The record gives the reactivity of an RNA of 207 nucleotides to DMS and 2A3.
[RMDB]
RNA sequence: GGGAACGACUCGAGUAGAGUCGAAAAGGUAUUAAAGUAAGCAAAAGAAUCAAACAUAAAAACGUUAGGUCAAGGUGUAGCCAAUGAAAUGGGAAGAAAUGGGCUACAUUUUCUUAUAAAAGAACAUUACUAUACCCUUUAUGAAACUAAAGGACUACAAUGGCGAAUAGUUCGCUAUUCGCCAUUGAAAAGAAACAACAACAACAAC
Reactivity to DMS in 0.01 (KOAc 150mM, MgCl2 10mM, bicine 150mM(pH8.5), 24C), signal-to-noise 1, nucleotides 027 to 156: g000g100u000a030u000u000a050a030a070g030u000a030a090g000c030a060a040a080a110g010a140a040u010c020a040a080a130c050a080u010a030a050a090a130a090c040g000u000u000a080g010g010u000c100a100a090g040g030u010g000u000a050g020c000c000a040a030u000g010a080a050a060u000g020g010g010a090a100g000a070a100a050u010g030g020g020c100u000a030c020a010u000u000u000u020c030u000u000a150u010a030a040a020a100g000a040a080c030a090u000u000a060c030u000a060u000a030c030c000c010u070u000u000a030u000g010a130a090a060c100u010a020a010a050g000g000a120c030u000a170
Reactivity to 2A3 in 0.01 (KOAc 150mM, MgCl2 10mM, bicine 150mM(pH8.5), 24C), signal-to-noise 2, nucleotides 027 to 156: g020g010u040a040u110u110a230a060a030g020u030a010a050g020c080a030a080a020a040g050a050a030u050c040a030a030a060c050a060u220a170a120a050a010a000c030g000u010u040a020g010g050u060c060a040a020g000g000u010g010u000a000g000c010c020a020a020u070g060a100a050a040u090g070g040g020a000a060g020a040a140a020u050g020g010g000c000u020a000c000a000u020u050u010u000c010u000u140a090u090a200a140a010a020g020a040a010c020a090u110u080a020c020u020a010u070a120c000c000c020u010u050u030a080u100g070a080a030a000c010u020a040a020a000g040g010a000c020u110a070
For DMS the reverse transcriptase was MarathonRT. For 2A3 the reverse transcriptase was SuperScript II with manganese.